[RMDB]
Conditions: 150 mM KOAc, 10 mM MgCl2 and 150 mM bicine (pH 8.5), 24 C. Chemical mapping of a 177-nucleotide RNA with 2A3 and DMS. DMS adducts were read by reverse transcription with MarathonRT. The DMS profile rests on 804 reads. For 2A3 the reverse transcriptase was SuperScript II with manganese. Values cover nucleotides 27 to 126.
RNA sequence: GGGAACGACUCGAGUAGAGUCGAAAAAUGCACAAUACAGUGUUUAUGCGGUUACCCACCGCGUAGAGCAUAGAACGCUCAAACAACAAAGGAGAAAAACAAAUGAAAACCCAGGCUUCGGCCUGGGCUACGCUUUAUACUUCGGUAUAAAGCGUAGAAAAGAAACAACAACAACAAC
Reactivity to 2A3 in 0.01 (KOAc 150mM, MgCl2 10mM, bicine 150mM(pH8.5), 24C), signal-to-noise 3, nucleotides 027 to 126: a000u150g030c020a020c030a060a210u300a260c070a120g000u000g000u000u100u050a030u060g000c010g030g020u010u150a100c010c000c020a010c010c000g000c000g000u000a040g000a020g000c000a010u030a110g100a150a040c030g010c000u000c010a020a070a030c070a020a030c020a040a120a050g140g060a130g200a080a070a020a020a000c090a020a140a070u110g080a080a090a040a010c010c000c010a000g000g020c010u050u150c200g100g000c010c000u010g000g000g000
Reactivity to DMS in 0.01 (KOAc 150mM, MgCl2 10mM, bicine 150mM(pH8.5), 24C), signal-to-noise 1, nucleotides 027 to 126: a090u000g000c010a070c010a130a110u020a160c300a140g010u000g010u000u000u000a000u000g000c030g000g000u000u000a160c010c030c020a300c000c010g010c000g030u010a200g000a000g010c010a070u000a050g000a090a150c220g000c010u040c000a050a060a080c140a050a030c070a090a000a110g010g020a090g000a020a100a050a030a030c110a060a040a050u000g000a130a100a120a250c010c000c010a020g000g000c000u000u000c270g010g010c000c020u000g000g000g020